[RMDB]
RNA sequence: GGGAACGACUCGAGUAGAGUCGAAAAAUAGAUAUCUUUAUUACGGGUCACCAACAUCGACAAAUUGCUGAAAGAUUUAAGCAAACGGCUGUGAUUCAACCUGGUACGAGAGGUACAACUGUAGGCACACCGUUGCACUCUUCGGAGUGCAACGGUGAAAAGAAACAACAACAACAAC
Reactivity to 2A3 in 0.01 (KOAc 150mM, MgCl2 10mM, bicine 150mM(pH8.5), 24C), signal-to-noise 1, nucleotides 027 to 126: a000u270a000g170a090u100a070u040c000u080u180u000a000u090u000a060c090g030g000g000u000c000a000c130c000a030a230c030a010u030c100g210a040c030a030a100a010u300u090g000c040u130g080a120a120a120g070a140u100u250u050a000a010g110c090a130a000a000c090g000g000c110u010g000u000g030a030u060u060c000a000a000c060c000u010g110g030u000a000c000g060a010g000a030g190g010u010a000c000a090a140c090u030g160u100a090g000g000c000a000